The data come from the RNA Mapping Database (RMDB), library OK2TRN. An RNA of 177 nucleotides, treated with DMS and 2A3 and read out base by base. For DMS the reverse transcriptase was MarathonRT. Values cover nucleotides 27 to 126. For DMS, 723 sequencing reads were counted.
RNA sequence: GGGAACGACUCGAGUAGAGUCGAAAAGAUACCACGCCGCAGCCCGCGCAGAACAUUGCACCCAGUGCGGUGAUCGACGCGACGGCGAAGCUGGGUAACAACGUAUCGAUUGGCGCUAACGCGGUGACCGUGGAUGUGUCUUCGGACACAUCCACGGAAAAGAAACAACAACAACAAC
Reactivity to DMS in 0.01 (KOAc 150mM, MgCl2 10mM, bicine 150mM(pH8.5), 24C), signal-to-noise 1, nucleotides 027 to 126: g000a130u000a080c000c020a300c090g020c000c000g010c050a260g010c120c110c260g000c000g060c150a090g020a020a080c040a060u000u000g030c090a080c000c080c030a040g010u000g000c020g010g000u000g000a050u000c030g000a140c160g010c020g000a050c160g000g000c020g040a040a120g010c030u010g000g000g040u000a040a150c040a020a030c100g000u040a120u020c080g010a270u000u000g000g000c010g090c050u000a050a120c060g000c020g000g000u000g000a120
Reactivity to 2A3 in 0.01 (KOAc 150mM, MgCl2 10mM, bicine 150mM(pH8.5), 24C), signal-to-noise 1, nucleotides 027 to 126: g080a000u100a070c000c030a020c040g030c000c000g000c000a000g050c000c000c000g000c000g010c000a020g000a030a030c010a020u010u060g000c030a030c000c110c060a070g020u030g010c010g000g200u030g030a230u040c020g060a090c030g040c060g080a160c040g100g110c030g020a020a000g000c000u080g000g010g010u050a120a020c020a050a040c030g070u050a160u260c090g070a130u040u260g100g000c050g010c040u080a090a030c090g000c060g000g000u020g040a070